[RMDB]
RNA sequence: GGGAACGACUCGAGUAGAGUCGAAAAGGACUGCGCAGUCCGGCAACAUCAGCAGAGAGCCCGCUAUACGUGACGGAUUGGCUGAAGCGUACAGACAUAUUGAGCCUCCUGCAAGAGGCAGCCAAGCAAAACGUACGUGAGUUCGCUCACGUACGAAUCAGGACUACUCGUUCGCGAGUAGUCCUGAAAAAGAAACAACAACAACAAC
Reactivity to DMS in 0.01 (KOAc 150mM, MgCl2 10mM, bicine 150mM(pH8.5), 24C), signal-to-noise 1, nucleotides 027 to 156: g000g000a020c010u000g040c130g020c030a140g040u010c060c020g060g050c050a070a040c020a150u000c090a060g010c050a080g000a180g020a100g010c010c030c000g080c010u000a050u000a090c040g000u000g020a200c040g000g000a220u000u000g010g000c010u040g020a070a290g000c030g000u000a130c040a030g030a060c010a060u040a110u020u000g000a110g000c020c000u000c000c010u000g000c090a050a060g000a060g010g020c050a040g000c030c020a020a120g080c110a060a030a040a180c000g000u000a010c050g020u000g010a060g030u000u000c260g010c000u000c010a000c030g000u020a000c000g000a020a030
Reactivity to 2A3 in 0.01 (KOAc 150mM, MgCl2 10mM, bicine 150mM(pH8.5), 24C), signal-to-noise 2, nucleotides 027 to 156: g010g020a060c030u100g040c240g090c120a030g010u000c000c000g030g040c030a030a050c010a240u120c050a000g010c050a000g100a010g000a030g150c030c060c020g000c020u050a020u030a110c110g030u070g070a020c040g050g000a060u060u030g050g040c000u040g010a080a000g030c000g020u010a050c010a060g070a030c010a040u160a110u090u150g060a020g000c000c000u010c000c020u030g070c040a060a050g000a000g040g010c010a030g000c000c030a020a000g020c040a060a000a050a020c010g000u010a000c000g000u010g000a010g000u050u080c170g030c080u000c000a000c000g000u000a000c000g000a000a010